[RMDB]
RNA sequence: GGGAACGACUCGAGUAGAGUCGAAAAUGGCUGACCGGGUUAUCAAGAUGAAAGUAAGUAGCACCCAAUGGGAGAGAUCUGAGAUUGAGUAGGUUAGCACAAAUUUAUACUUUUACUCAAUGGUCUACUUUCAAGCAUUAUUCGUAAUGCUUGAAAGAAAAGAAACAACAACAACAAC
Reactivity to DMS in 0.01 (KOAc 150mM, MgCl2 10mM, bicine 150mM(pH8.5), 24C), signal-to-noise 5, nucleotides 027 to 126: u000g010g000c020u000g020a050c040c030g000g010g020u000u000a070u000c070a080a100g010a120u010g000a080a090a100g000u010a050a100g020u000a080g020c110a080c030c010c020a060a100u010g010g020g000a090g010a100g000a050u000c030u000g010a130g010a100u000u000g010a030g010u000a040g010g010u000u000a080g000c100a100c110a040a050a110u010u010u000a090u000a070c010u000u000u010u000a030c010u000c000a040a060u000g000g010u000c040u000a140
Reactivity to 2A3 in 0.01 (KOAc 150mM, MgCl2 10mM, bicine 150mM(pH8.5), 24C), signal-to-noise 4, nucleotides 027 to 126: u040g020g000c010u020g010a070c040c010g050g010g070u100u080a080u150c040a060a050g020a120u130g090a120a030a030g040u090a070a020g020u010a020g070c000a030c010c020c000a020a070u150g050g050g000a100g010a000g000a020u010c030u090g030a070g020a190u040u030g010a010g060u070a030g050g010u040u030a010g000c060a000c030a110a090a020u080u190u040a090u040a050c010u020u060u090u040a020c000u000c000a020a070u080g040g000u030c010u020a050